[RMDB]
Structure probing data (DMS and 2A3) for a 177-nucleotide construct. The reactions ran in a buffer of 150 mM KOAc, 10 mM MgCl2 and 150 mM bicine (pH 8.5), at 24 C. The 2A3 profile rests on 5,532 reads. The DMS profile rests on 2,288 reads. Reactivities are given for positions 27 through 126.
RNA sequence: GGGAACGACUCGAGUAGAGUCGAAAAGAUAUGGAACAAGUAGACAUGGCUGUCGGAAACGAUAAGCCAACAGCUACUGUUCCUAAGUCAAAAGCGUUGAUUCUCGGUUCGCCGAGAAUCAACGCAACGAGUAACAAAUCUUCGGAUUUGUUACUCGAAAAGAAACAACAACAACAAC
Reactivity to DMS in 0.01 (KOAc 150mM, MgCl2 10mM, bicine 150mM(pH8.5), 24C), signal-to-noise 2, nucleotides 027 to 126: g010a020u010a300u000g000g020a020a010c000a080a040g030u010a000g030a040c070a250u000g010g010c010u000g000u000c000g010g010a070a080a090c010g020a010u000a010a050g010c000c000a000a040c240a130g000c000u000a000c000u020g000u000u000c000c000u010a020a080g000u010c030a030a090a080a170g000c010g000u000u000g000a010u000u010c000u010c050g000g000u000u000c200g020c010c010g010a010g000a010a000u000c000a000a000c000g020c000a000a000
Reactivity to 2A3 in 0.01 (KOAc 150mM, MgCl2 10mM, bicine 150mM(pH8.5), 24C), signal-to-noise 2, nucleotides 027 to 126: g020a010u070a040u120g000g000a040a020c060a200a300g020u010a000g060a050c030a120u070g010g000c000u010g010u010c000g000g000a040a040a010c010g010a010u110a300a040g020c000c010a020a020c040a030g000c000u010a000c010u020g000u000u000c000c010u000a080a020g040u030c030a040a040a060a080g010c010g000u000u010g010a010u020u000c000u000c000g060g070u080u110c300g030c060c000g000a000g000a000a010u000c000a000a010c020g010c020a010a000